[RMDB]
This 207-nucleotide RNA was probed chemically with DMS and 2A3. For DMS, 1,830 sequencing reads were counted. For DMS the reverse transcriptase was MarathonRT.
RNA sequence: GGGAACGACUCGAGUAGAGUCGAAAAGAAAGAAAGAAAGCGGUUGGGUGGGUCCAUCGACCGUCGUGGCGUAUUCGGACGCUUUACCACGACGCGAGGAAAUAGGGAGACCGACCACCCCCUUUAACAGAGGUAUAGUAGUUCGCUACUAUACCAACUCAGUGAAUAUGUUCGCAUAUUCACUGAGAAAAGAAACAACAACAACAAC
Reactivity to DMS in 0.01 (KOAc 150mM, MgCl2 10mM, bicine 150mM(pH8.5), 24C), signal-to-noise 1, nucleotides 027 to 156: g010a120a070a090g020a160a090a160g000a100a090a080g020c080g000g000u010u010g020g010g020u000g000g000g010u000c070c020a090u000c060g030a110c100c000g030u000c020g050u000g000g000c010g000u010a100u000u010c050g010g010a150c070g040c040u000u040u000a050c000c000a030c000g010a020c000g020c010g000a190g010g010a050a070a120u020a030g040g030g020a180g020a070c000c020g020a020c000c000a040c000c000c010c000c020u000u020u000a130a150c060a090g020a150g020g020u000a010u000a000g010u000a010g010u010u000c300g020c000u000a030c000u000a010u020a020c000c000a020a030
Reactivity to 2A3 in 0.01 (KOAc 150mM, MgCl2 10mM, bicine 150mM(pH8.5), 24C), signal-to-noise 3, nucleotides 027 to 156: g030a010a050a000g070a050a120a010g020a070a040a000g140c090g060g080u170u100g080g020g030u070g030g010g040u020c010c030a130u100c020g020a050c010c040g000u000c000g000u000g010g000c040g010u060a120u140u210c100g100g060a020c040g000c020u100u100u090a030c020c000a000c000g010a010c000g000c030g010a010g030g070a000a000a130u070a060g030g010g000a070g050a060c000c010g020a020c000c000a010c030c000c000c000c020u040u080u060a130a060c100a050g060a060g070g000u000a000u000a000g000u010a000g010u020u060c210g020c080u010a000c000u000a000u000a000c020c010a000a000